[RMDB]
RNA sequence: GGGAACGACUCGAGUAGAGUCGAAAAAUCGAUCGCGCUACUGGCCUGAGCAGUACGCAGCAUCUGUGCUGAGUACAGUACGGCGCAUGGCCUCUACGUACGUACGUACGCGCCGAUCAUAGCGCUAAGAGUGCUAUGGCUUCGGCCAUAGCACUCUAAAAGAAACAACAACAACAAC
Reactivity to DMS in 0.01 (KOAc 150mM, MgCl2 10mM, bicine 150mM(pH8.5), 24C), signal-to-noise 2, nucleotides 027 to 126: a130u000c090g010a080u020c080g020c080g000c060u000a070c120u020g000g040c010c020u000g000a130g020c030a070g020u010a010c010g000c010a000g000c010a040u000c250u010g020u010g000c020u020g000a060g020u010a040c120a080g000u000a040c120g000g010c010g020c030a040u000g010g000c010c010u020c110u000a100c010g000u000a040c120g020u010a100c090g020u000a020c100g060c210g030c040c000g000a030u010c100a100u000a070g000c010g020c040u000a100
Reactivity to 2A3 in 0.01 (KOAc 150mM, MgCl2 10mM, bicine 150mM(pH8.5), 24C), signal-to-noise 1, nucleotides 027 to 126: a000u110c050g050a000u090c040g000c000g000c070u070a070c060u070g000g000c000c030u050g040a020g060c060a000g000u020a020c100g020c020a000g000c010a010u090c150u290g290u030g060c000u010g000a020g010u090a030c000a050g030u030a040c020g040g000c000g000c050a070u090g010g000c020c010u000c000u040a020c040g060u040a040c110g050u060a040c110g000u000a000c030g010c000g030c080c020g000a020u040c000a030u060a020g060c130g020c100u080a180

The record gives the reactivity of an RNA of 177 nucleotides to DMS and 2A3. For 2A3, 1,299 sequencing reads were counted. The reactions ran in a buffer of 150 mM KOAc, 10 mM MgCl2 and 150 mM bicine (pH 8.5), at 24 C. For 2A3 the reverse transcriptase was SuperScript II with manganese. It was measured as part of the RMDB library OK2TRN. In probing experiments dimethyl sulfate is read out at A N1 and C N3, which are open when not base-paired.